RNA sequence: GGGAACGACUCGAGUAGAGUCGAAAAGUGUGUGUCACUCAGUGAGAGAGACACACAGAGAGUCUGUGUGACUGUGACACUCUCUCUCUGACAGUGAGACUCUGUGUCUGAGACUCAGUGUCUGACAGGACUACUCAUGGUUCGCCAUGAGUAGUCCAAAAGAAACAACAACAACAAC
Reactivity to 2A3 in 0.01 (KOAc 150mM, MgCl2 10mM, bicine 150mM(pH8.5), 24C), signal-to-noise 3, nucleotides 027 to 126: g040u060g030u000g000u010g050u040c000a030c030u030c050a040g080u110g170a080g000a000g000a000g020a080c000a000c000a010c010a020g000a000g010a000g070u030c050u110g040u020g020u040g070a150c130u100g090u150g220a010c040a020c040u000c000u000c000u000c010u000c000u010g000a010c030a050g110u010g050a000g010a000c000u040c010u030g120u050g060u120c110u210g100a070g000a090c000u000c050a050g050u020g020u050c020u000g040a040c070a100
Reactivity to DMS in 0.01 (KOAc 150mM, MgCl2 10mM, bicine 150mM(pH8.5), 24C), signal-to-noise 2, nucleotides 027 to 126: g020u000g030u010g030u000g020u000c010a080c030u000c020a130g040u000g000a120g000a050g000a040g000a170c020a020c000a000c000a000g040a120g000a110g030u000c020u000g010u010g010u010g000a160c190u000g000u010g010a080c110a060c010u010c010u000c010u000c020u000c000u030g000a050c160a070g000u000g000a020g010a060c020u010c020u020g000u000g000u010c080u010g010a100g000a060c010u000c060a020g010u000g030u010c000u000g000a070c100a130